[RMDB]
Description: Conditions: 150 mM KOAc, 10 mM MgCl2 and 150 mM bicine (pH 8.5), 24 C. The record gives the reactivity of an RNA of 207 nucleotides to 2A3 and DMS. For 2A3, 4,649 sequencing reads were counted. For DMS, 2,857 sequencing reads were counted.
RNA sequence: GGGAACGACUCGAGUAGAGUCGAAAAAGAUCCACGCUACGGCGUGGAUCACACGUUCAUCCCUAUCGGGACGGAAGUAGGCAUAGUGCCGAAGGAACGCAUUAGUCAUGCGCUACGGCGCAUGACACACAUCAGAGUCACUUCGGUGACUCUGAAAGACCUCUUUAUAGUUCGCUAUAAAGAGGUCAAAAGAAACAACAACAACAAC
Reactivity to 2A3 in 0.01 (KOAc 150mM, MgCl2 10mM, bicine 150mM(pH8.5), 24C), signal-to-noise 5, nucleotides 027 to 156: a000g000a000u000c000c000a000c000g000c010u040a050c300g120g000c000g000u000g000g000a000u010c000a000c000a000c010g000u010u000c010a020u020c000c020c000u110a220u240c130g010g010g010a000c020g020g040a040a010g020u030a010g030g000c040a070u110a230g100u150g180c000c000g010a000a010g040g020a010a000c010g020c030a040u070u170a040g000u000c020a000u010g000c010g000c000u020a040c280g080g000c000g000c000a000u000g000a000c000a000c010a000c000a060u030c000a000g000a000g000u000c000a000c020u060u110c200g060g000u010g000a000c000u010c000u000g010a000a000a000
Reactivity to DMS in 0.01 (KOAc 150mM, MgCl2 10mM, bicine 150mM(pH8.5), 24C), signal-to-noise 2, nucleotides 027 to 156: a090g020a030u000c000c000a010c010g030c000u010a100c180g060g030c030g040u000g040g010a000u000c000a000c080a040c040g020u000u010c000a200u000c000c020c030u010a120u010c150g010g000g030a080c040g020g000a030a070g020u000a170g000g060c010a150u000a160g030u020g030c000c010g000a110a090g020g020a080a080c050g000c030a080u000u000a090g020u000c000a020u010g000c000g050c020u000a110c170g110g030c000g000c020a000u000g010a010c050a030c070a050c080a140u000c000a020g010a030g010u000c000a000c000u000u020c300g020g010u000g000a010c010u000c010u010g040a000a050a100